The data come from the RNA Mapping Database (RMDB), library TTRDEL. The record gives the reactivity of an RNA of 177 nucleotides to DMS and 2A3. DMS adducts were read by reverse transcription with MarathonRT. Reactivities are given for positions 27 through 126. 2A3 adducts were read by reverse transcription with SuperScript II with manganese.

RNA sequence: GGGAACGACUCGAGUAGAGUCGAAAAGAUAUGGACUAACAGAGUCCGUGUCGGAAACGACAUGGGACGACGAAGUUAGGUCCUAAGUCAAAACGGUCAUGCGGCAGUUCGCUGCCGCAUGACCGAACAGACAUGUAACGUUCGCGUUACAUGUCUGAAAAGAAACAACAACAACAAC
Reactivity to DMS in 0.01 (KOAc 150mM, MgCl2 10mM, bicine 150mM(pH8.5), 24C), signal-to-noise 2, nucleotides 027 to 126: g010a010u010a300u000g000g000a170c020u000a020a040c020a050g020a300g010u000c000c000g010u010g020u000c000g000g020a100a070a170c000g010a000c000a010u000g050g000g010a020c010g020a150c250g000a100a110g000u000u000a010g000g000u000c000c000u000a070a070g010u010c020a030a170a100a180c010g000g000u000c000a010u000g020c000g010g000c020a030g000u000u010c210g010c020u000g020c000c000g040c000a000u000g010a000c010c000g000a010a060
Reactivity to 2A3 in 0.01 (KOAc 150mM, MgCl2 10mM, bicine 150mM(pH8.5), 24C), signal-to-noise 2, nucleotides 027 to 126: g000a010u120a040u150g010g000a010c020u040a000a000c020a030g080a000g090u020c010c030g030u010g000u020c010g030g050a060a100a020c020g010a000c010a020u170g120g100g080a030c030g090a030c080g060a060a000g000u000u030a060g100g090u090c000c000u040a130a030g110u050c060a010a030a070a120c040g040g000u000c020a010u000g000c030g030g060c000a020g030u110u260c240g070c220u010g000c010c000g050c030a000u000g000a010c000c010g000a000a000